[RMDB]
RNA sequence: GGGAACGACUCGAGUAGAGUCGAAAAGAAAUACGGUGCCGGAUAACGUCCGGCGGGGGCGACCCCAGGGAAAGUGCCACAGAGAGCAAACCGCCAUGCCUUGCAUGGUAAGGGUGAAAGGGUGGGGGAACUUAUAAAAGUUCGCUUUUAUAAGUUCAAAAGAAACAACAACAACAAC
Reactivity to 2A3 in 0.01 (KOAc 150mM, MgCl2 10mM, bicine 150mM(pH8.5), 24C), signal-to-noise 1, nucleotides 027 to 126: g000a000a110a000u190a050c050g060g060u060g030c000c000g040g000a020u010a120a120c090g070u020c000c000g000g010c000g010g000g000g000g000c030g010a080c020c000c020c000a010g000g000g020a080a140a040g050u060g070c020c020a020c110a100g160a030g020a010g100c010a020a080a020c000c030g030c010c000a010u000g020c010c090u150u220g000c010a020u010g000g000u030a020a110g070g010g010u070g020a060a030a020g050g040g000u180g010g000g010g030
Reactivity to DMS in 0.01 (KOAc 150mM, MgCl2 10mM, bicine 150mM(pH8.5), 24C), signal-to-noise 3, nucleotides 027 to 126: g020a120a100a070u010a070c120g010g010u000g040c000c000g020g020a050u000a120a100c130g000u000c010c010g000g010c000g010g000g000g000g010c190g020a170c030c010c010c040a090g000g000g000a100a060a090g000u010g000c000c050a100c090a130g010a100g010a130g000c040a030a050a050c020c030g010c010c000a010u000g000c010c230u010u030g010c000a010u000g000g010u000a040a080g010g000g020u000g000a040a090a150g010g000g010u000g000g000g010g010